[RMDB]
RNA sequence: GGGAACGACUCGAGUAGAGUCGAAAAGCAUUCGUGAAAUUACAAAUGUUGAUAACAGCGACUACAAACUAGAUCUUGAUGCUGGUGUAAGGUUUUACAUAGUUAGUGGAAAUAUAUGCUAUGUGAUGACCGUAGUAAGCUUUGAGAUUCACCCUCAAUCGUUGUAAGAGUUCGCUCUUACAACGAUAAAAGAAACAACAACAACAAC
Reactivity to 2A3 in 0.01 (KOAc 150mM, MgCl2 10mM, bicine 150mM(pH8.5), 24C), signal-to-noise 6, nucleotides 027 to 156: g010c020a040u070u090c070g020u070g140a110a140a150u230u120a110c070a070a140a080u140g020u090u050g070a110u080a150a060c050a060g030c010g050a010c030u090a020c080a030a120a010c020u050a040g010a100u050c030u050u150g040a050u170g050c040u020g020g030u050g050u070a100a190g000g020u010u000u000u020a000c000a010u020a000g020u070u050a070g060u160g200g070a060a120a010u220a030u040a020u160g000c000u000a000u010g000u010g020a040u160g020a010c010c000g000u000a020g020u020a090a010g000c000u050u040u060g020a020g000a010u050u090c050a090c070c000c020u020c010a030
Reactivity to DMS in 0.01 (KOAc 150mM, MgCl2 10mM, bicine 150mM(pH8.5), 24C), signal-to-noise 3, nucleotides 027 to 156: g000c030a020u000u000c040g020u010g010a120a130a110u010u000a120c040a040a070a090u000g000u020u010g010a150u000a090a090c090a130g000c040g010a160c050u000a080c050a080a070a070c060u000a090g000a030u010c030u000u010g030a080u000g010c020u000g020g030u000g020u000a070a060g010g020u000u000u000u010a020c010a020u000a020g010u010u000a150g000u000g000g010a110a090a120u000a070u010a130u020g020c010u000a030u000g000u000g000a030u000g010a010c000c010g020u000a080g010u010a080a050g010c030u000u000u000g010a030g000a090u000u000c060a130c070c010c010u000c030a100